[RMDB]
RNA sequence: GGGAACGACUCGAGUAGAGUCGAAAAGAACUCACCUUCGGGUGAGUUCAAACCCGAUGAAGCGGCACUUAGACAGCUUCAUACACCUAAGAAGUGCUAUAAAAACAACGCGGUUCGCCGCGUUGAACUAUAGGACUUCGUUCGCGAAGUCCUAUAGAAAAGAAACAACAACAACAAC
Reactivity to 2A3 in 0.01 (KOAc 150mM, MgCl2 10mM, bicine 150mM(pH8.5), 24C), signal-to-noise 2, nucleotides 027 to 126: g000a000a000c000u000c010a000c000c000u020u080c210g040g010g000u020g000a000g000u000u000c000a000a000a010c010c000c000g000a080u060g010a010a010g010c020g060g040c080a040c090u090u020a060g060a170c040a020g000c010u010u010c010a020u030a010c070a020c000c070u070a040a080g060a060a010g030u010g040c040u050a050u060a260a180a030a040a010c000a000a000c010g000c020g020g000u050u010c200g030c080c000g000c000g000u000u000g000a010a000
Reactivity to DMS in 0.01 (KOAc 150mM, MgCl2 10mM, bicine 150mM(pH8.5), 24C), signal-to-noise 2, nucleotides 027 to 126: g000a000a000c000u000c000a010c020c000u000u010c200g070g020g020u000g000a010g020u000u000c000a050a170a080c020c000c000g010a060u000g010a010a020g040c050g020g020c040a090c120u010u000a110g040a100c090a070g010c000u000u000c000a020u000a200c110a040c090c060u010a110a090g000a090a090g010u000g010c120u010a080u010a050a050a090a120a160c000a000a000c000g010c000g010g000u000u000c220g000c000c000g000c010g020u000u010g000a040a090
Structure probing data (2A3 and DMS) for a 177-nucleotide construct. DMS adducts were read by reverse transcription with MarathonRT. The data come from the RNA Mapping Database (RMDB), library M2PK50. The DMS profile rests on 1,450 reads. The RNA was probed in 150 mM KOAc, 10 mM MgCl2 and 150 mM bicine (pH 8.5) at 24 C.